The data come from the RNA Mapping Database (RMDB), library M2RFPK. The record gives the reactivity of an RNA of 207 nucleotides to 2A3 and DMS. The RNA was probed in 150 mM KOAc, 10 mM MgCl2 and 150 mM bicine (pH 8.5) at 24 C. For DMS, 5,241 sequencing reads were counted. 2A3 adducts were read by reverse transcription with SuperScript II with manganese.
RNA sequence: GGGAACGACUCGAGUAGAGUCGAAAAUGGACUUUUUACAGUUCCUACUUAUCCGGUUUUAACGCUGUUUUAUUGGCGCAAAGGUUUACGGAUAAACAACCAAUAAUUAAACCUUUUGUGUGCGAAAAUUGGACGUUUAGGUUCGCCUAAACGUCAAUCCUAUGCUAUGAUUCGUCAUAGCAUAGGAAAAAGAAACAACAACAACAAC
Reactivity to 2A3 in 0.01 (KOAc 150mM, MgCl2 10mM, bicine 150mM(pH8.5), 24C), signal-to-noise 2, nucleotides 027 to 156: u120g010g000a040c020u050u050u050u020u230a070c170a050g030u100u070c000c030u020a070c040u040u000a010u000c000c000g010g030u010u020u010u050a050a050c060g040c020u030g120u170u090u170u110a150u230u270g040g000c010g000c000a020a060a040g030g010u000u000u010a000c000g000g000a000u000a030a070a010c030a020a010c060c070a040a120u170a070a040u140u100a060a010a000c000c000u000u040u040u150g100u010g000u010g090c130g060a080a110a060a120u080u090g060g000a000c000g000u000u000u000a000g000g020u040u040c150g080c040c000u000a000a000a000c010g000u000c000a000a000
Reactivity to DMS in 0.01 (KOAc 150mM, MgCl2 10mM, bicine 150mM(pH8.5), 24C), signal-to-noise 3, nucleotides 027 to 156: u010g000g020a070c030u000u000u020u000u000a090c140a100g020u000u000c000c060u000a140c130u010u000a020u000c000c000g000g010u000u000u010u000a250a070c040g010c010u020g010u010u000u010u010a090u020u020g010g010c020g000c010a020a050a010g050g020u000u000u000a130c030g020g000a060u000a000a010a250c090a090a180c000c040a100a190u010a070a150u010u000a010a030a010c020c000u000u000u000u010g000u000g010u010g040c010g010a080a030a080a160u010u010g010g010a020c000g020u000u000u000a010g000g030u000u010c300g040c020c000u000a000a020a000c010g010u000c000a010a040